Conditions: 150 mM KOAc, 10 mM MgCl2 and 150 mM bicine (pH 8.5), 24 C.
Chemical mapping of a 177-nucleotide RNA with DMS and 2A3.
Values cover nucleotides 27 to 126.
DMS adducts were read by reverse transcription with MarathonRT.
[RMDB]
RNA sequence: GGGAACGACUCGAGUAGAGUCGAAAAGGGUUUGGAUUACAUCAAUAGUCACAUGAGCAGAAGUAAACAGAACAAGAAGUACUGCGGUUAUUCAAGUUCAAAGUUCACACAAUCGCAAUAAAUUGAAUCUACCGACUAUGUUCGCAUAGUCGGUAGAAAAAGAAACAACAACAACAAC
Reactivity to DMS in 0.01 (KOAc 150mM, MgCl2 10mM, bicine 150mM(pH8.5), 24C), signal-to-noise 2, nucleotides 027 to 126: g060g000g020u000u000u010g020g000a090u040u000a060c060a100u010c070a070a050u000a100g010u000c070a040c050a040u010g000a070g010c080a030g000a050a100g000u010a030a050a040c080a120g010a030a040c020a080a270g010a070a030g030u000a030c060u010g010c030g050g000u010u000a100u000u000c060a000a260g000u000u010c050a040a030a070g000u000u000c090a050c140a090c070a010a050u000c050g000c030a090a100u000a020a050a080u010u020g000a100a130
Reactivity to 2A3 in 0.01 (KOAc 150mM, MgCl2 10mM, bicine 150mM(pH8.5), 24C), signal-to-noise 1, nucleotides 027 to 126: g010g000g020u050u090u020g030g000a050u030u110a020c030a040u080c020a060a060u060a080g110u060c020a050c020a070u100g050a030g000c010a020g000a110a030g090u110a080a060a000c030a020g020a020a000c020a040a030g000a070a000g070u010a000c020u040g000c000g000g040u020u010a080u040u040c010a000a010g040u010u000c020a030a090a130g070u180u160c040a040c010a000c000a050a120u080c020g020c060a010a030u150a100a110a060u160u110g070a020a020